[RMDB]
RNA sequence: GGGAACGACUCGAGUAGAGUCGAAAAGAUAUGGUUGUUUUCGGUGCAUGUUUGAUUACUAAAAGUUGGGGCAUUCGAUGGUUUACAGAAGUCAUAAAUUCAAAUAUCCCGUUUAAUCGCUCAUCUAUAAGAAUGCUAGGUUCGCCUAGCAUUCUUAAAAAGAAACAACAACAACAAC
Reactivity to DMS in 0.01 (KOAc 150mM, MgCl2 10mM, bicine 150mM(pH8.5), 24C), signal-to-noise 3, nucleotides 027 to 126: g020a090u040a060u020g010g020u000u000g000u010u010u020u010c020g000g040u000g020c080a010u010g010u030u000u020g020a110u020u020a100c140u010a030a040a090a100g030u000u020g000g000g040g010c020a060u000u020c020g000a060u000g030g000u040u020u000a050c120a140g000a050a070g010u010c120a080u010a060a030a080u000u020c070a020a060a070u010a060u010c020c000c000g000u000u010u010a070a060u030c070g000c010u000c060a080u000c010u030a150
Reactivity to 2A3 in 0.01 (KOAc 150mM, MgCl2 10mM, bicine 150mM(pH8.5), 24C), signal-to-noise 2, nucleotides 027 to 126: g100a110u110a070u180g120g000u000u000g000u000u000u000u020c110g020g140u050g000c030a000u030g000u020u090u100g020a060u010u020a020c030u160a060a020a000a110g060u110u060g000g000g030g000c140a170u000u080c020g050a080u040g000g040u020u090u120a030c030a010g170a130a000g040u030c000a020u080a100a180a040u210u080c060a000a000a000u130a030u130c030c000c000g000u040u040u040a060a050u030c010g000c070u060c030a030u000c000u080a120